RNA sequence: GGGAACGACUCGAGUAGAGUCGAAAAGGGUAGAUCUUCGGAUCUACCCAAAAGGAGCAACCAACGAAGGAAGUGCUAGCAUAAGCGUGCAGGCUAGCACUUAAAGGUUCCGCUUCGGCGGAACCAAGGGAAUACUUAACUUCGGUUAAGUAUUCCCAAAAGAAACAACAACAACAAC
Reactivity to DMS in 0.01 (KOAc 150mM, MgCl2 10mM, bicine 150mM(pH8.5), 24C), signal-to-noise 2, nucleotides 027 to 126: g010g010g010u000a000g000a000u000c010u000u010c200g030g000a010u000c000u010a000c000c000c000a000a020a060a090g010g020a090g020c040a060a090c020c000a050a040c180g010a180a100g020g000a030a000g040u000g000c010u000a010g030c000a040u010a050a060g010c080g000u000g010c060a150g000g000c010u000a010g000c020a000c000u000u010a010a070a080g000g000u000u000c000c000g010c000u010u000c170g020g010c000g010g000a000a000c000c010a020a040
Reactivity to 2A3 in 0.01 (KOAc 150mM, MgCl2 10mM, bicine 150mM(pH8.5), 24C), signal-to-noise 2, nucleotides 027 to 126: g010g000g000u020a010g000a000u040c020u030u070c250g010g010a000u020c000u000a000c000c000c000a000a000a000a000g020g000a070g040c010a010a060c000c000a010a050c090g120a070a050g160g110a020a020g000u010g020c000u000a000g000c000a070u000a300a020g090c040g150u110g050c060a010g030g090c000u000a000g010c040a000c010u010u020a000a000a010g000g000u000u000c000c000g000c000u030u010c180g100g010c000g010g000a000a000c000c000a000a010
Chemical mapping of a 177-nucleotide RNA with DMS and 2A3.
It was measured as part of the RMDB library M2PK50.
Reactivities are given for positions 27 through 126.